[RMDB]
RNA sequence: GGGAACGACUCGAGUAGAGUCGAAAAUUGAGGCGGUCCGGACUCACCGGUGAGUUCAACUCCGACGCGAACGCCAUCGCCCGCGGCAAGCAGGUGUGCCGCCAGUUGCAAGACGGUGGCGAACAGCCACGGAAGUACAGUUCGCUGUACUUCCGUGAAAAGAAACAACAACAACAAC
Reactivity to DMS in 0.01 (KOAc 150mM, MgCl2 10mM, bicine 150mM(pH8.5), 24C), signal-to-noise 8, nucleotides 027 to 126: u020u020g010a100g010g010c020g000g000u010c110c080g000g000a040c040u010c030a080c110c100g000g010u010g000a060g010u000u020c070a090a140c090u020c010c030g010a080c140g010c050g010a100a150c020g000c000c000a010u000c010g020c050c010c090g020c030g010g000c010a030a100g020c090a080g020g020u030g010u010g010c010c010g000c000c100a110g020u020u000g000c240a140a110g010a070c030g000g000u000g000g010c010g000a030a070c110a240g000c050
Reactivity to 2A3 in 0.01 (KOAc 150mM, MgCl2 10mM, bicine 150mM(pH8.5), 24C), signal-to-noise 9, nucleotides 027 to 126: u120u130g050a060g030g050c040g010g030u050c060c060g020g030a040c020u020c050a060c050c080g170g040u090g020a040g010u030u060c020a030a040c030u020c030c020g060a060c030g020c010g030a050a010c010g000c000c000a010u010c010g010c000c030c030g010c010g010g000c020a030a060g030c040a090g110g130u170g040u040g120c000c010g000c010c000a120g110u170u160g060c030a070a030g020a020c010g000g010u000g000g000c000g010a080a030c030a020g010c010
Background
Chemical mapping of a 177-nucleotide RNA with DMS and 2A3. For DMS the reverse transcriptase was MarathonRT. For 2A3, 37,882 sequencing reads were counted. The reactions ran in a buffer of 150 mM KOAc, 10 mM MgCl2 and 150 mM bicine (pH 8.5), at 24 C.